[RMDB]
RNA sequence: GGGAACGACUCGAGUAGAGUCGAAAAAGGUGUGGAGCGACCUUAAACAGUUCUGGUGGUGCUCUGAAUGGAGUACUCUACUGAGAUUAUAAAAUAGAAGGUAAGCUAUUAUCUCUUACAACAGGGCGAAGCACUCGGGGGUUCGCCCCCGAGUGAAGUUUACCACUUCGUUCGCGAAGUGGUAAACAAAAGAAACAACAACAACAAC
Reactivity to 2A3 in 0.01 (KOAc 150mM, MgCl2 10mM, bicine 150mM(pH8.5), 24C), signal-to-noise 2, nucleotides 027 to 156: a000g020g000u010g030u070g010g000a010g010c010g010a010c000c040u120u130a160a070a000c030a030g000u000u030c010u080g020g050u070g000g070u010g000c010u030c020u020g210a110a060u230g030g000a000g000u030a030c000u000c010u060a100c050u040g000a000g000a020u070u120a050u270a160a170a080a000u060a010g070a110a020g120g000u090a080a030g040c000u000a030u050u000a030u080c030u030c020u080u060a050c030a140a020c030a070g020g070g000c020g050a080a020g050c020a000c000u010c000g010g000g000g000g010u020u020c040g110c010c000c010c000c000g000a000g000u000g000a000a000

The record gives the reactivity of an RNA of 207 nucleotides to 2A3.
It was measured as part of the RMDB library M2RFPK.
2A3 adducts were read by reverse transcription with SuperScript II with manganese.
For 2A3, 724 sequencing reads were counted.
As a SHAPE reagent, 2A3 marks flexible, mostly unpaired nucleotides at the ribose 2'-OH.
The RNA was probed in 150 mM KOAc, 10 mM MgCl2 and 150 mM bicine (pH 8.5) at 24 C.